[RMDB]
RNA sequence: GGGAACGACUCGAGUAGAGUCGAAAAUAAAACAAAAAGUUUAGCGGAAUAACCCAUUUUGUCUGACCGAUCAUCAACGCAGCAAUGGCGUAAGACGUAUUGAUUUUUCAGACAGUUAGCGGGCUGCUAAGGAUCUAAGCUUCGGCUUAGAUCCUUAAAAAGAAACAACAACAACAAC
Reactivity to DMS in 0.01 (KOAc 150mM, MgCl2 10mM, bicine 150mM(pH8.5), 24C), signal-to-noise 2, nucleotides 027 to 126: u070a040a090a120a060c050a040a100a150a140a170g010u000u000u010a040g010c010g020g010a060a030u030a120a140c030c020c000a140u030u000u020u010g000u010c000u010g000a020c060c200g030a040u000c020a010u000c130a130a000c020g020c010a150g000c040a240a110u010g010g000c000g020u000a000a020g050a130c000g000u000a120u020u000g000a010u000u000u000u010u000c000a010g020a010c000a030g020u030u010a020g010c100g040g000g000c010u020g010c040
Reactivity to 2A3 in 0.01 (KOAc 150mM, MgCl2 10mM, bicine 150mM(pH8.5), 24C), signal-to-noise 2, nucleotides 027 to 126: u060a040a030a020a000c100a070a040a050a020a040g040u080u050u040a040g000c060g060g060a080a110u110a100a100c000c000c020a000u050u070u020u060g020u000c020u000g000a020c050c000g000a000u000c000a000u020c050a100a010c000g010c000a000g000c020a170a300u300g270g020c030g000u000a000a000g110a010c000g020u040a030u010u000g000a000u000u000u020u020u020c020a000g000a000c000a000g110u000u020a010g010c020g010g000g000c000u030g000c000
The record gives the reactivity of an RNA of 177 nucleotides to DMS and 2A3. The RNA was probed in 150 mM KOAc, 10 mM MgCl2 and 150 mM bicine (pH 8.5) at 24 C.